An RNA of 177 nucleotides, treated with DMS and 2A3 and read out base by base.
For 2A3 the reverse transcriptase was SuperScript II with manganese.
DMS adducts were read by reverse transcription with MarathonRT.
Values are in units of 0.01, from 0 to 300, in steps of 10.

[RMDB]
RNA sequence: GGGAACGACUCGAGUAGAGUCGAAAAUUAAAUAACGUGAAAAAGCAGAAGGAGGACUGCAAGGACACGAACCACCAAACAUCAAAAACAGCAAGGAGGAGCUGAAGGAGAUCAACCACCAAAAAAAGGUAAUAUCUUUGUUCGCAAAGAUAUUACCAAAAGAAACAACAACAACAAC
Reactivity to DMS in 0.01 (KOAc 150mM, MgCl2 10mM, bicine 150mM(pH8.5), 24C), signal-to-noise 1, nucleotides 027 to 126: u010u010a000a010a000u020a080a080c080g040u000g000a020a200a170a260a060g030c020a020g100a060a170g000g000a170g000g000a140c020u000g000c020a020a060g000g020a300c030a030c030g000a060a040c050c060a070c060c050a020a110a100c110a040u000c090a010a070a050a080a030c080a050g000c000a020a080g000g080a160g030g000a050g010c050u020g000a030a150g000g000a120g030a050u000c030a060a080c070c060a050c090c020a000a000a080a060a010a130a040
Reactivity to 2A3 in 0.01 (KOAc 150mM, MgCl2 10mM, bicine 150mM(pH8.5), 24C), signal-to-noise 1, nucleotides 027 to 126: u030u010a030a010a090u200a110a040c030g020u040g160a170a100a000a060a000g010c030a000g060a070a030g070g030a010g050g000a020c000u000g030c020a000a010g050g010a000c000a000c010g020a020a000c030c000a000c000c040a080a040a040c000a020u090c060a040a070a070a020a100c030a030g030c020a000a070g020g000a010g030g040a010g000c030u030g040a050a000g030g020a050g000a000u070c000a000a070c010c070a010c030c000a050a060a000a000a020a030a020